[RMDB]
RNA sequence: GGGAACGACUCGAGUAGAGUCGAAAAGAUUUAAACAGAUGGAGAUACACAAAUGUUUGAAUCCCAGUAACAAAAAUCCGGGUAUCUCGGGUAUACAGUAGUGCAGAUACUGUAUUUUUAAUGCUCCUUAGGUUUUCCAUCUUCGGAUGGAAAACAAGUAUUCAAGCGAGUUCGCUCGCUUGAAUACAAAAGAAACAACAACAACAAC
Reactivity to 2A3 in 0.01 (KOAc 150mM, MgCl2 10mM, bicine 150mM(pH8.5), 24C), signal-to-noise 1, nucleotides 027 to 156: g000a000u020u020u020a000a000a020c010a050g030a060u020g020g030a170g020a130u170a100c070a000c010a030a090a070u040g000u000u000u060g030a030a010u070c010c030c000a050g080u080a090a030c070a090a220a020a000a020u080c020c010g110g000g060u130a080u040c050u000c050g020g000g010u020a010u000a010c000a000g000u020a000g120u070g300c080a020g100a200u010a020c000u000g000u000a000u020u020u000u030u060a170a180u120g000c050u050c050c020u020u020a020g090g030u000u000u010u020c000c000a020u000c020u020u010c170g030g000a000u020g010g000a000a000a000a000c000a000a020